[RMDB]
RNA sequence: GGGAACGACUCGAGUAGAGUCGAAAAGAUAUGGAACGUAUUGCCAAACCGCCAGGACAUGCUCGAUUGGAUCGGAAACGAUCUAGAGAGCAACAGCCUGACGGUUUGGCAAUACGUUCCUAAGUCAUCGGUUAUCAAAGUUCGCUUUGAUAACCGAAAAAGAAACAACAACAACAAC
Reactivity to DMS in 0.01 (KOAc 150mM, MgCl2 10mM, bicine 150mM(pH8.5), 24C), signal-to-noise 1, nucleotides 027 to 126: g010a030u010a300u000g010g000a070a000c000g030u000a010u000u000g040c000c010a020a000a000c000c000g030c000c000a010g020g030a080c100a250u000g010c000u010c020g000a300u000u020g040g010a030u000c010g010g000a160a120a240c010g010a010u010c000u000a030g010a300g010a020g000c000a020a020c300a200g010c000c000u000g010a010c000g020g000u000u010u000g010g020c000a000a000u010a000c000g000u010u000c000c000u000a040a080g010u000c020a150
Chemical mapping of a 177-nucleotide RNA with DMS. For DMS, 1,025 sequencing reads were counted. It was measured as part of the RMDB library TTRINS.